Annotation
Chemical mapping of a 207-nucleotide RNA with 2A3 and DMS. For 2A3 the reverse transcriptase was SuperScript II with manganese. The DMS profile rests on 2,839 reads. Values cover nucleotides 27 to 156. The RNA was probed in 150 mM KOAc, 10 mM MgCl2 and 150 mM bicine (pH 8.5) at 24 C. DMS adducts were read by reverse transcription with MarathonRT.

RNA sequence: GGGAACGACUCGAGUAGAGUCGAAAAACUAUUGUCAAAUAAAAAUUUGUAAAUUAGACGAUAAUCAUACAAAUGCACGACACUGAACAUUGCACUACAAAAGCCCUUCUCAAGCCUGCCAGAUCUGUCAUUGCUUUUGAACUGUGUGGUGGUAGGAGUACCAUUAGUAUUUCGAUACUAAUGGUACAAAAGAAACAACAACAACAAC
Reactivity to 2A3 in 0.01 (KOAc 150mM, MgCl2 10mM, bicine 150mM(pH8.5), 24C), signal-to-noise 4, nucleotides 027 to 156: a010c020u030a030u080u090g000u020c000a010a090a100u180a130a190a070a090a060u090u120u050g050u080a100a180a140u100u100a080g020a060c040g010a040u070a090a030u140c060a020u070a110c030a010a090a010u070g090c080a040c090g030a010c030a000c090u050g030a090a000c010a040u030u100g020c030a020c030u100a060c060a020a070a030a020g020c020c020c000u130u020c030u020c010a040a090g010c000c000u020g020c030c000a020g020a180u030c020u040g080u050c020a060u030u140g060c000u070u080u030u050g060a070a050c040u020g000u000g020u030g120g000u020g000g030u040a030g000g020a010
Reactivity to DMS in 0.01 (KOAc 150mM, MgCl2 10mM, bicine 150mM(pH8.5), 24C), signal-to-noise 2, nucleotides 027 to 156: a150c050u000a050u000u010g000u020c010a060a080a170u030a070a110a090a070a160u000u020u010g000u010a050a090a150u000u010a140g000a150c090g020a140u000a060a160u000c010a200u000a090c080a050a010a060u010g010c040a110c100g020a080c030a030c090u000g030a060a110c050a060u010u000g010c010a070c020u000a110c010a020a090a080a080g010c020c040c050u010u000c060u010c020a040a110g020c000c040u000g000c050c080a130g000a110u010c020u000g010u000c050a090u010u010g010c010u000u000u000u000g030a050a120c090u000g020u000g000u000g020g040u000g000g000u000a060g000g020a230